[RMDB]
RNA sequence: GGGAACGACUCGAGUAGAGUCGAAAAGGAGCGGCGAUCGCGCUGCGCUCACCGCCGUUGGGUUCCUGCCGGAACCGGUAGACAUCCACCGCGCCAGCCCUGAUAUCGGGCCGGUGCUCUUGGCGCAACCACCCACUCCUUUCGAGGAGUGGGUGGUAAAAGAAACAACAACAACAAC
Reactivity to DMS in 0.01 (KOAc 150mM, MgCl2 10mM, bicine 150mM(pH8.5), 24C), signal-to-noise 1, nucleotides 027 to 126: g000g020a180g000c040g040g030c030g010a040u000c180g000c050g050c140u010g000c010g050c100u000c040a080c100c000g140c000c040g010u000u020g000g000g030u010u010c040c010u000g010c070c050g020g020a060a120c100c020g050g000u020a050g000a110c040a060u000c040c040a080c170c030g010c010g010c000c000a080g030c010c010c010u010g020a180u020a050u010c140g000g020g000c010c020g000g000u000g020c030u000c030u030u000g010g000c060g020c080a140